Structure probing data (DMS and 2A3) for a 177-nucleotide construct. 2A3 adducts were read by reverse transcription with SuperScript II with manganese. High DMS reactivity at an A or C suggests that its Watson-Crick edge is free. For DMS, 2,036 sequencing reads were counted. The RNA was probed in 150 mM KOAc, 10 mM MgCl2 and 150 mM bicine (pH 8.5) at 24 C. Source: RMDB library M2PK50, as collected in RNAgym. Values cover nucleotides 27 to 126.
[RMDB]
RNA sequence: GGGAACGACUCGAGUAGAGUCGAAAAUUAAUAGAUUUCGAUCUAUUAAACAGGCGCAGGCUCGCUCCUAGCGACCGGCGCAAGCGCGCACGGUACAGCGAAUACUGAAUCCCUUCGGGGAUUCAAAUACAAAUAUACAGUUCGCUGUAUAUUUGUAAAAAGAAACAACAACAACAAC
Reactivity to DMS in 0.01 (KOAc 150mM, MgCl2 10mM, bicine 150mM(pH8.5), 24C), signal-to-noise 2, nucleotides 027 to 126: u000u000a000a020u010a010g000a010u000u000u010c170g010a040u000c000u010a010u000u000a010a010a170c130a110g010g000c000g020c080a030g010g010c140u000c020g020c030u010c050c070u000a110g010c020g010a050c020c010g000g000c000g030c000a050a030g000c200g020c020g010c020a050c050g010g000u010a060c070a100g010c030g000a110a090u030a090c150u000g000a010a000u010c000c000c000u000u010c160g010g020g000g010a010u000u000c000a010a050a120
Reactivity to 2A3 in 0.01 (KOAc 150mM, MgCl2 10mM, bicine 150mM(pH8.5), 24C), signal-to-noise 1, nucleotides 027 to 126: u030u010a000a020u010a000g010a000u060u080u140c130g020a010u000c000u000a010u020u030a030a040a020c040a040g140g000c040g020c070a020g120g010c030u030c040g030c020u050c020c050u020a040g040c010g020a010c020c010g020g000c000g000c020a080a090g210c060g000c000g000c030a130c140g020g030u120a110c070a020g020c030g080a060a040u080a210c070u030g000a000a000u020c000c000c000u020u010c180g030g000g010g010a000u000u010c010a000a010a000